[RMDB]
RNA sequence: GGGAACGACUCGAGUAGAGUCGAAAAAAUCACAUCCAUCAAACUGGAGAUAGUAACCUCCAAAAGUGGUGGUCAGGCGGGGGAUCAGAUGUCAUGGUCAGCAAGUGGGAGCCUAGCAGUGACGAUCAACCAUCCUGGUCUUCGGACCAGGAUGGUUAAAAGAAACAACAACAACAAC
Reactivity to DMS in 0.01 (KOAc 150mM, MgCl2 10mM, bicine 150mM(pH8.5), 24C), signal-to-noise 1, nucleotides 027 to 126: a020a010u080c020a080c090a090u030c110c000a040u050c090a100a220a250c090u000g000g040a030g000a090u000a080g000u070a030a070c120c000u000c000c060a020a040a060a070g040u040g020g000u040g000g030u000c200a050g060g010c050g020g000g000g000g070a140u000c010a120g000a100u000g040u050c020a100u070g000g000u000c070a050g000c000a050a030g060u000g000g000g000a180g000c040c000u000a040g000c110a030g000u040g030a100c060g000a140u040c110
Reactivity to 2A3 in 0.01 (KOAc 150mM, MgCl2 10mM, bicine 150mM(pH8.5), 24C), signal-to-noise 1, nucleotides 027 to 126: a000a010u110c080a080c080a150u240c010c050a060u010c090a210a050a000c000u080g030g030a000g000a000u040a000g150u100a130a090c000c000u170c080c000a040a040a040a040g080u070g000g010u000g020g070u000c000a100g040g000c090g000g040g000g000g000a000u100c040a000g070a070u010g160u200c000a020u030g130g000u000c000a000g000c050a020a050g110u020g000g010g010a030g000c000c000u000a000g060c000a040g050u000g100a000c070g000a030u040c050
Chemical mapping of a 177-nucleotide RNA with DMS and 2A3. Conditions: 150 mM KOAc, 10 mM MgCl2 and 150 mM bicine (pH 8.5), 24 C. Source: RMDB library OK1LIB, as collected in RNAgym. For 2A3, 407 sequencing reads were counted.